[RMDB]
RNA sequence: GGGAACGACUCGAGUAGAGUCGAAAAGAUAUGGACCGGUGGAAAGAGCUUGGACCUAAAUCGGAAACGAUUUAGCUAGCUCCCACCCGGUCCUAAGUCAAAGACCGUAAUCUUCGGAUUACGGUCACCAAUUAUUUAGGUUCGCCUAAAUAAUUGGAAAAGAAACAACAACAACAAC
Reactivity to DMS in 0.01 (KOAc 150mM, MgCl2 10mM, bicine 150mM(pH8.5), 24C), signal-to-noise 6, nucleotides 027 to 126: g000a030u000a240u000g010g010a020c000c010g020g010u000g010g020a300a140a180g010a010g010c010u000u000g040g000a080c300c010u000a000a010a010u000c000g010g010a070a060a110c000g000a020u000u000u000a000g000c020u000a000g010c000u000c010c010c000a070c090c060c050g020g000u000c000c000u000a000a080g000u000c030a110a110a150g000a010c000c000g000u010a010a000u000c000u000u010c270g020g000a000u000u000a000c000g000g010u000c000a020
Reactivity to 2A3 in 0.01 (KOAc 150mM, MgCl2 10mM, bicine 150mM(pH8.5), 24C), signal-to-noise 8, nucleotides 027 to 126: g010a020u040a010u070g010g000a010c010c090g000g040u040g010g180a300a300a300g030a120g010c070u290u300g080g060a060c010c000u000a010a000a000u010c000g010g000a020a050a040c010g000a000u010u000u000a000g030c010u010a010g010c000u100c150c000c000a030c020c010c010g000g000u000c000c000u000a010a000g000u020c020a090a070a160g010a000c000c000g000u010a000a000u000c020u080u130c300g140g000a010u010u000a000c000g000g000u000c010a000